[RMDB]
RNA sequence: GGGAACGACUCGAGUAGAGUCGAAAAUUGUGGUCAAGACCUUGGCGUAGUAUCCAAGGUUGUCAAGGUUCCUAUUGACUUAACAUUGAUUGAGUUUAUGUUAUGGUGUAAGGAUGGACAGGGGAAAAACGAGUAUACCCUUCGGGGUAUACUCGUUAAAAGAAACAACAACAACAAC
Reactivity to DMS in 0.01 (KOAc 150mM, MgCl2 10mM, bicine 150mM(pH8.5), 24C), signal-to-noise 1, nucleotides 027 to 126: u000u030g050u010g020g010u010c070a030a100g020a000c000c000u000u000g000g010c280g000u000a210g020u010a120u000c000c020a020a020g000g010u000u000g000u000c050a020a040g010g000u000u010c010c020u000a150u000u000g010a020c020u000u010a040a030c040a090u000u000g010a020u010u000g010a120g020u000u000u000a050u000g000u020u000a040u020g020g000u000g040u010a040a080g000g020a090u000g020g000a040c030a060g000g000g000g000a070a030a060
This 177-nucleotide RNA was probed chemically with DMS.
The RNA was probed in 150 mM KOAc, 10 mM MgCl2 and 150 mM bicine (pH 8.5) at 24 C.
It was measured as part of the RMDB library M2PK90.
Values cover nucleotides 27 to 126.